This 177-nucleotide RNA was probed chemically with DMS and 2A3.

RNA sequence: GGGAACGACUCGAGUAGAGUCGAAAAGAAGAGCAGGCGGAUAAUCUUGUGCAGUAUGCAUGCUCGUAACUCCAGCGCACAAGUGGAAGCACAAGAUUUGAAUCCAGCAUAGCGCAGGAGCCGCAGAACGGGCUAGGUAUUUCGAUACCUAGCCCGUAAAAGAAACAACAACAACAAC
Reactivity to DMS in 0.01 (KOAc 150mM, MgCl2 10mM, bicine 150mM(pH8.5), 24C), signal-to-noise 1, nucleotides 027 to 126: g000a080a130g000a010g030c010a010g000g020c030g000g030a150u040a050a030u000c020u000u000g050u000g020c000a050g050u080a020u070g020c000a060u000g000c050u000c000g000u000a080a200c110u000c030c040a070g000c000g000c030a100c040a120a110g030u030g000g000a130a110g000c000a000c020a020a060g020a070u000u000u070g020a100a220u000c000c000a060g010c120a080u010a040g000c000g010c000a110g000g000a030g020c070c040g000c180a110g030a070
Reactivity to 2A3 in 0.01 (KOAc 150mM, MgCl2 10mM, bicine 150mM(pH8.5), 24C), signal-to-noise 1, nucleotides 027 to 126: g100a030a000g000a030g040c040a060g130g000c060g010g000a000u000a060a000u040c000u000u000g000u000g000c070a080g110u130a080u140g000c040a000u040g040c000u000c010g000u000a000a000c060u000c000c000a000g000c030g000c030a020c020a190a050g200u060g030g040a140a000g020c000a030c000a000a000g000a010u000u000u280g150a040a040u010c000c000a000g000c030a110u110a120g040c020g000c060a040g000g000a030g000c000c010g150c040a000g020a130
The data come from the RNA Mapping Database (RMDB), library OK1LIB. For DMS the reverse transcriptase was MarathonRT. Conditions: 150 mM KOAc, 10 mM MgCl2 and 150 mM bicine (pH 8.5), 24 C.